[RMDB]
RNA sequence: GGGAACGACUCGAGUAGAGUCGAAAACCCUCCUGCGUGUUCGCACGCAGGAGGGAAAAACCGUAGGUCCCGGACAGACAUGCGUUUUCGAAAGAGAAACGCAACAGCUGUCGGACCUAAACGGAAAAAUCCGCGAUUUGUUCGCAAAUCGCGGAAACAAGCCAUUAUUGUUCGCAAUAAUGGCUUGAAAAGAAACAACAACAACAAC
Reactivity to 2A3 in 0.01 (KOAc 150mM, MgCl2 10mM, bicine 150mM(pH8.5), 24C), signal-to-noise 1, nucleotides 027 to 156: c000c000c000u010c010c000u030g040c020g070u160g130u190u140c300g050c170a010c050g000c040a000g000g010a010g010g010g020a000a000a020a040a000c010c000g030u020a000g000g030u050c070c120c110g150g030a000c000a000g020a020c050a060u090g010c020g000u020u070u040u130c060g110a240a070a080g140a050g010a010a010a000c070g030c110a040a000c040a060g100c010u060g010u010c000g000g020a000c000c020u000a090a040a010c010g010g040a120a000a000a060a000u010c010c000g000c000g000a000u000u030u030g080u080u120c200g000c080a000a000a000u040c000g010c060g010g070a000a000a000

Notes: This 207-nucleotide RNA was probed chemically with 2A3. The data come from the RNA Mapping Database (RMDB), library RNAMAK.